[RMDB]
RNA sequence: GGGAACGACUCGAGUAGAGUCGAAAAUACCGUCUUCUUCCCGACGGUUUCAAUCCAUAGCUUCACGUUGUGUAGCGUAGGUGGAAGGUAUCGUGUGGUGUAUAAACACCACAUAGUCUCUUAGGGGUCAAGCUGAUAAACUUCGGUUUAUCAGCAAGUGUAACGACUAGUUCGCUAGUCGUUACACAAAAGAAACAACAACAACAAC
Reactivity to 2A3 in 0.01 (KOAc 150mM, MgCl2 10mM, bicine 150mM(pH8.5), 24C), signal-to-noise 5, nucleotides 027 to 156: u100a000c000c000g010u000c010u200u000c010u030u000c000c000c000g000a000c000g000g020u010u020u100c070a060a060u050c010c040a040u040a100g010c000u070u090c010a030c060g300u270u240g010u070g020u040a010g030c020g060u040a070g000g070u110g030g010a030a020g030g050u110a060u110c070g000u010g010u000g010g000u010g040u020a080u130a270a270a010c000a000c020c000a000c000a000u000a000g030u000c010u000c010u140u120a030g000g010g040g000u070c080a070a030g010c000u000g000a000u020a000a000a000c010u020u030c090g090g010u010u010u010a000u000c000a000g000c000a000a000
Reactivity to DMS in 0.01 (KOAc 150mM, MgCl2 10mM, bicine 150mM(pH8.5), 24C), signal-to-noise 2, nucleotides 027 to 156: u000a040c010c000g010u000c000u000u020c070u030u000c030c040c000g030a020c010g030g050u000u010u000c080a100a120u010c020c030a180u000a150g010c030u000u000c030a050c040g040u000u010g020u010g030u000a070g010c030g000u000a060g000g020u000g030g010a060a020g040g030u020a040u000c040g000u000g000u000g000g050u000g030u000a170u020a180a130a110c010a020c010c000a010c010a000u000a000g020u010c030u000c040u010u000a160g010g010g030g000u010c090a080a170g010c000u000g000a020u000a010a030a020c000u000u000c300g050g000u000u000u000a000u010c020a000g010c030a000a000
Structure probing data (2A3 and DMS) for a 207-nucleotide construct. The DMS profile rests on 4,499 reads. The data come from the RNA Mapping Database (RMDB), library M2RFPK. The reactions ran in a buffer of 150 mM KOAc, 10 mM MgCl2 and 150 mM bicine (pH 8.5), at 24 C. Reactivities are given for positions 27 through 156.